Background
Chemical mapping of a 177-nucleotide RNA with 2A3 and DMS. Values cover nucleotides 27 to 126.
RNA sequence: GGGAACGACUCGAGUAGAGUCGAAAAGAUAUGGAGGGAGCCAUAUUAGCUCGACACUCGGAAACGAGUGAGAACGAGAAAAAAUUGGCGAAGAACUCCUAAGUCAAAAGCUUCGUUCGCGAAGCAAGAGACAUUCUAUCUUCGGAUAGAAUGUCUCAAAAGAAACAACAACAACAAC
Reactivity to 2A3 in 0.01 (KOAc 150mM, MgCl2 10mM, bicine 150mM(pH8.5), 24C), signal-to-noise 1, nucleotides 027 to 126: g010a020u040a020u090g000g000a020g010g030g040a080g010c010c020a030u060a080u300u280a130g070c010u010c000g040a030c010a000c010u000c000g000g040a000a090a030c020g000a010g000u020g010a030g020a070a020c020g010a030g000a240a160a020a020a000a050u040u000g000g020c040g120a180a060g080a060a030c010u000c010c020u010a080a030g040u040c020a080a000a190a020g000c000u010u020c010g070u060u150c300g000c000g160a000a000g000c010a010a020
Reactivity to DMS in 0.01 (KOAc 150mM, MgCl2 10mM, bicine 150mM(pH8.5), 24C), signal-to-noise 2, nucleotides 027 to 126: g000a050u000a300u010g000g000a010g000g000g010a160g000c000c000a050u000a070u010u000a200g010c010u010c000g030a220c000a000c000u000c000g010g000a090a090a100c000g020a020g000u000g000a150g000a060a140c000g000a020g020a000a040a090a030a070a190u020u000g000g000c020g020a130a100g010a140a200c000u000c000c010u000a010a120g000u000c010a170a090a120a110g020c010u000u000c010g040u000u030c170g030c000g020a020a010g010c010a020a050

About this RNA:
The RNA was probed in 150 mM KOAc, 10 mM MgCl2 and 150 mM bicine (pH 8.5) at 24 C.